The record gives the reactivity of an RNA of 207 nucleotides to 2A3 and DMS. The data come from the RNA Mapping Database (RMDB), library OK3TST. Values cover nucleotides 27 to 156. The reactions ran in a buffer of 150 mM KOAc, 10 mM MgCl2 and 150 mM bicine (pH 8.5), at 24 C.
RNA sequence: GGGAACGACUCGAGUAGAGUCGAAAAUGAGGCUGAACAAUCUUCAUCGGACAAUUUAAGGACUAACGAUAUUUGAAAAUUGAGCCACACUACAACAAAGUCAAGCCCAGUACCUAGACAUGAGGGCUGUAUGACCACAUUUGCCCCACUUCGAUGAAAAUGGCUGCUAUUUCGAUAGCAGCCAUUUAAAAGAAACAACAACAACAAC
Reactivity to 2A3 in 0.01 (KOAc 150mM, MgCl2 10mM, bicine 150mM(pH8.5), 24C), signal-to-noise 2, nucleotides 027 to 156: u110g020a010g010g010c000u050g050a060a040c030a060a130u070c020u070u070c070a020u010c060g020g010a010c040a060a080u080u180u230a200a090g070g030a060c070u050a110a030c040g020a040u060a170u120u140u190g040a090a070a010a030u050u060g010a000g050c030c000a030c000a000c000u150a030c040a170a000c020a100a110a000g060u010c010a040a060g000c020c010c000a010g010u000a050c040c030u020a070g030a090c000a020u090g040a120g000g020g000c000u000g000u020a140u070g010a010c010c030a040c040a110u070u080u100g010c030c030c010c020a010c020u060u040c140g000a000u200g030a160
Reactivity to DMS in 0.01 (KOAc 150mM, MgCl2 10mM, bicine 150mM(pH8.5), 24C), signal-to-noise 2, nucleotides 027 to 156: u000g000a090g000g020c000u010g000a060a150c000a120a170u000c040u000u020c030a060u060c050g020g040a090c100a110a110u000u000u060a020a180g000g020a100c020u000a040a080c060g010a130u000a080u030u000u040g000a020a070a060a130u000u000g030a120g020c000c040a050c060a120c010u000a020c020a090a110c060a160a070a200g020u000c020a060a040g030c000c000c000a050g010u000a080c060c030u000a190g010a060c050a070u000g010a120g010g000g030c010u000g030u030a000u000g030a100c010c060a100c020a100u000u010u000g010c030c000c020c020a110c150u000u000c020g000a090u030g000a110